RNA sequence: GGGAACGACUCGAGUAGAGUCGAAAAGAAAGAAAGAACAAUAGACACCCAUCGUGUCUUUUGCUCUGCAGUCAGUAAAUAUUUUUUUGUGAAUGUGUAGCAAAAGACAGAAUGGUGGUCCAUUGAAAGUAGUCCAGUUCUUCGGAACUGGACUACUAAAAGAAACAACAACAACAAC
Reactivity to 2A3 in 0.01 (KOAc 150mM, MgCl2 10mM, bicine 150mM(pH8.5), 24C), signal-to-noise 1, nucleotides 027 to 126: g050a000a050a000g220a080a130a000g040a170a000c010a020a020u050a020g000a000c030a100c020c020c000a000u050c120g150u040g000u000c000u020u000u000u000g000c000u000c050u050g000c000a000g000u000c000a000g260u200a020a210a000u110a280u120u080u040u030u000u070u120g080u000g120a160a010u000g000u000g000u000a000g000c010a010a000a000a000g010a000c040a030g030a040a000u020g000g000u020g020g020u040c000c020a030u020u060g010a060a000